Source: RMDB library OK3TST, as collected in RNAgym. An RNA of 207 nucleotides, treated with 2A3 and DMS and read out base by base. Conditions: 150 mM KOAc, 10 mM MgCl2 and 150 mM bicine (pH 8.5), 24 C.
[RMDB]
RNA sequence: GGGAACGACUCGAGUAGAGUCGAAAAAGCUUUUACAUCAUAUUUCGAUGGUGGUAAUUUAGAAGAACAUUCAUUUGCUAUUCUAACUUCCACUCCAGCUAUAAUAGCCGCAGUAACAGCUGUUAGUGGUGUAGUUAUUGGAUCACUGUAUGCUACAAAAUGGUACUGGAUUCGUCCAGUACCAUUUAAAAGAAACAACAACAACAAC
Reactivity to 2A3 in 0.01 (KOAc 150mM, MgCl2 10mM, bicine 150mM(pH8.5), 24C), signal-to-noise 2, nucleotides 027 to 156: a000g140c080u110u080u090u100a050c020a010u050c010a030u050a180u270u220u190c090g030a030u050g000g010u020g000g040u110a030a090u020u050u030a030g000a050a000g010a050a020c010a040u050u130c030a120u100u040u080g030c030u030a020u000u050c000u000a040a030c030u030u000c000c000a010c030u010c010c020a010g000c010u060a040u030a300a140u070a080g080c060c060g000c040a040g040u100a020a090c010a060g020c020u000g030u130u050a040g010u040g050g000u020g010u020a030g040u120u000a090u080u120g020g080a030u100c020a030c070u010g020u110a070u140g030c000u050a060c020a030
Reactivity to DMS in 0.01 (KOAc 150mM, MgCl2 10mM, bicine 150mM(pH8.5), 24C), signal-to-noise 2, nucleotides 027 to 156: a150g020c050u010u000u000u000a050c000a020u010c020a090u000a180u010u020u000c040g030a110u000g010g030u000g020g020u010a040a030u000u000u000a020g020a010a030g000a060a020c010a030u000u000c300a160u010u010u000g070c000u000a240u000u000c020u010a000a030c140u000u000c010c000a020c020u000c140c060a110g020c060u000a080u000a050a020u000a020g030c020c040g030c070a170g010u010a100a160c050a020g010c000u020g040u000u000a060g020u010g020g030u000g020u000a050g010u000u000a080u000u000g010g000a090u000c100a120c160u000g010u000a060u000g010c010u000a050c100a080